Source: RMDB library OK3TST, as collected in RNAgym. This 207-nucleotide RNA was probed chemically with 2A3.
[RMDB]
RNA sequence: GGGAACGACUCGAGUAGAGUCGAAAAUCUCCUCCUCCUCUGUUUUCAUUGAAAUCCUCCCCUUGCUGAGUGCUGGGUAUAGCAGCCUGACCCCCGGGUCAGCUCCCGAAGGGCUUGUGGGAGGGCAGGAGAGGAGGGGGCAGGAGAAGGGCCAAACGUAGUAUGAAACAUUCGUGUUUCAUACUACAAAAGAAACAACAACAACAAC
Reactivity to 2A3 in 0.01 (KOAc 150mM, MgCl2 10mM, bicine 150mM(pH8.5), 24C), signal-to-noise 1, nucleotides 027 to 156: u030c030u040c000c000u000c000c000u010c000c010u000c020u010g210u210u080u080u070c120a150u120u300g120a160a150a170u030c000c010u020c020c010c010c000u010u010g000c010u070g070a210g150u050g030c010u040g000g000g020u080a090u120a080g050c010a000g020c000c010u020g010a080c010c000c000c030c060g040g020g020u000c000a000g000c000u010c000c000c000g060a030a000g020g040g000c000u040u040g100u300g020g010g000a030g020g000g000c040a030g000g040a060g010a030g030g000a000g000g010g000g020g000c100a020g010g010a010g030a050a000g060g010g040c060c070a140a040a000c080
The reactions ran in a buffer of 150 mM KOAc, 10 mM MgCl2 and 150 mM bicine (pH 8.5), at 24 C. Reactivities are given for positions 27 through 156.